[RMDB]
RNA sequence: GGGAACGACUCGAGUAGAGUCGAAAAGGCAGGUGACGGCCUCGACCAUCCUGCUGCUGCCGGUUGCCCUCUUCGUCGAUCAUCCGUGGACGCUGGCGCUGCCUUCGACUGAAACCUGGCUGGCGCGCGUCCCGUAGUGCUUCGGCACUACGGGACGAAAAGAAACAACAACAACAAC
Reactivity to DMS in 0.01 (KOAc 150mM, MgCl2 10mM, bicine 150mM(pH8.5), 24C), signal-to-noise 2, nucleotides 027 to 126: g000g010c020a000g000g030u000g000a180c160g000g000c030c000u030c050g000a140c080c030a150u010c020c000u010g000c030u000g000c000u000g000c000c010g000g020u010u020g040c010c030c060u000c020u010u020c070g020u010c020g070a040u000c110a020u030c030c020g000u010g000g020a080c040g030c010u000g040g000c050g070c010u010g030c020c050u010u020c090g010a240c060u000g000a120a110a150c080c060u020g020g000c000u000g000g030c030g000c090g000
Reactivity to 2A3 in 0.01 (KOAc 150mM, MgCl2 10mM, bicine 150mM(pH8.5), 24C), signal-to-noise 4, nucleotides 027 to 126: g040g000c010a000g000g050u070g080a050c070g070g000c040c000u040c060g100a110c000c000a040u050c000c000u010g030c010u040g060c060u050g030c020c030g040g070u110u120g020c030c000c000u040c000u080u070c020g070u000c000g060a120u090c030a030u000c020c050g030u050g060g010a040c050g000c030u070g010g020c020g000c050u040g000c000c000u050u140c050g070a120c050u090g090a080a030a070c010c040u030g040g000c070u070g040g000c020g020c000g000